[RMDB]
RNA sequence: GGGAACGACUCGAGUAGAGUCGAAAAGAUAUGGACCGAAGUCAGCGAGGAUCUAUUGGUCGGAAACGACCACGGUAGGGAGCUGUCACGGUCCUAAGUCAAAGGUACGUGGUUCGCCACGUACCAAGCGAUACCUCAAGUUCGCUUGAGGUAUCGCAAAAGAAACAACAACAACAAC
Reactivity to 2A3 in 0.01 (KOAc 150mM, MgCl2 10mM, bicine 150mM(pH8.5), 24C), signal-to-noise 1, nucleotides 027 to 126: g020a010u000a010u020g000g000a000c010c000g000a300a060g050u070c010a000g040c000g020a300g130g000a020u000c000u030a040u040u130g000g000u020c000g030g000a030a010a000c020g010a010c000c040a010c050g140g090u030a010g020g020g010a030g000c000u030g030u030c030a010c090g000g000u000c000c000u000a000a000g010u000c060a120a010a080g040g000u000a000c010g000u020g050g000u040u080c210g090c130c000a000c000g010u000a010c000c000a000a010
Reactivity to DMS in 0.01 (KOAc 150mM, MgCl2 10mM, bicine 150mM(pH8.5), 24C), signal-to-noise 1, nucleotides 027 to 126: g000a000u000a000u010g000g000a000c020c000g020a210a120g070u000c000a000g000c030g010a190g030g000a000u000c000u010a050u010u000g010g010u010c010g040g010a000a010a020c000g020a010c000c000a000c190g000g030u020a010g000g000g020a010g040c000u030g000u010c100a300c030g000g000u000c000c000u000a000a060g000u000c010a050a110a110g010g010u000a000c000g000u000g000g000u000u000c300g010c030c000a020c000g000u000a000c000c000a010a010
About this RNA
Conditions: 150 mM KOAc, 10 mM MgCl2 and 150 mM bicine (pH 8.5), 24 C. Chemical mapping of a 177-nucleotide RNA with 2A3 and DMS. For DMS the reverse transcriptase was MarathonRT. Values cover nucleotides 27 to 126. The DMS profile rests on 1,201 reads.